[RMDB]
RNA sequence: GGGAACGACUCGAGUAGAGUCGAAAAACGGCGUCACCGUCCGUGCCGGCGGCUCGGCGAUGGAGUACGCCCAGAUCAAUCGGCAGAACAAAGACGACCUGCUGGUGAUGGAGUUGAUCGCGAUUCCAUCCACUGUCUGGUUCGCCAGACAGUGGAUAAAAGAAACAACAACAACAAC
Reactivity to 2A3 in 0.01 (KOAc 150mM, MgCl2 10mM, bicine 150mM(pH8.5), 24C), signal-to-noise 2, nucleotides 027 to 126: a030c030g050g000c000g010u010c030a010c030c000g150u000c010c010g030u040g000c000c000g110g070c060g020g000c020u020c030g020g080c010g050a020u060g060g040a050g040u100a050c010g020c000c000c010a050g030a130u080c070a060a050u150c050g000g070c050a020g020a110a040c040a080a140a030g090a080c060g030a040c000c000u000g030c000u010g070g050u040g050a020u080g030g060a060g020u070u070g050a100u130c050g020c040g090a020u090u000c000c000
Reactivity to DMS in 0.01 (KOAc 150mM, MgCl2 10mM, bicine 150mM(pH8.5), 24C), signal-to-noise 3, nucleotides 027 to 126: a140c180g010g000c010g020u000c000a060c090c030g020u020c010c000g020u000g010c000c010g010g000c110g020g010c090u010c050g010g010c010g000a100u000g010g010a130g020u010a150c090g010c010c000c090a090g000a140u000c190a060a050u000c110g000g020c020a050g030a100a080c090a040a080a180g010a110c090g000a080c140c020u000g000c000u000g010g000u000g000a040u010g000g000a090g010u000u000g000a080u020c070g010c060g000a170u000u010c020c020